The record gives the reactivity of an RNA of 207 nucleotides to DMS and 2A3. The reactions ran in a buffer of 150 mM KOAc, 10 mM MgCl2 and 150 mM bicine (pH 8.5), at 24 C. For 2A3, 1,936 sequencing reads were counted.
[RMDB]
RNA sequence: GGGAACGACUCGAGUAGAGUCGAAAAGUAAUGUUCGCAUUACAUUGGAACCUUUGUGAGUGCGCCAAUGGGAGGUGUCGGAUGCCCAUUGGGCAUCCGUCACCGACGAUCAUUGGACCCGCACUCACUCUGGUAAAGUUUGCAGUUCGCUGCAAAAAUUGCUAUAUGAUUUCGAUCAUAUAGCAAUAAAAGAAACAACAACAACAAC
Reactivity to DMS in 0.01 (KOAc 150mM, MgCl2 10mM, bicine 150mM(pH8.5), 24C), signal-to-noise 1, nucleotides 027 to 156: g000u000a000a010u000g010u010u010c300g050c050a020u000u000a020c000a200u000u010g010g010a140a080c010c000u010u000u010g010u000g010a030g000u010g000c000g000c010c040a000a020u010g020g000g010a070g030g040u000g010u000c010g020g070a080u000g010c000c000c080a300u010u000g120g100g000c000a060u000c000c010g010u000c010a000c010c000g000a030c190g000a070u000c000a040u000u000g010g000a050c100c180c140g000c020a010c000u000c030a000c000u000c020u000g000g030u000a050a120a180g020u000u000u000g000c020a130g050u000u000c290g000c000u020g020c010a030a030a040a150
Reactivity to 2A3 in 0.01 (KOAc 150mM, MgCl2 10mM, bicine 150mM(pH8.5), 24C), signal-to-noise 2, nucleotides 027 to 156: g010u010a020a010u030g010u080u150c220g030c070a000u020u020a010c010a010u050u160g110g080a040a030c000c000u000u020u020g000u000g000a020g010u000g000c010g020c020c000a010a010u000g000g010g000a000g030g010u010g000u000c010g000g000a010u010g000c080c010c120a300u290u300g020g010g000c000a010u000c000c000g000u000c000a000c010c000g000a030c000g000a000u000c010a010u000u000g020g000a060c050c000c010g010c000a000c000u010c000a000c000u000c000u020g000g000u020a020a040a000g090u020u050u010g000c000a000g000u030u120c220g110c160u010g000c000a000a000a000a000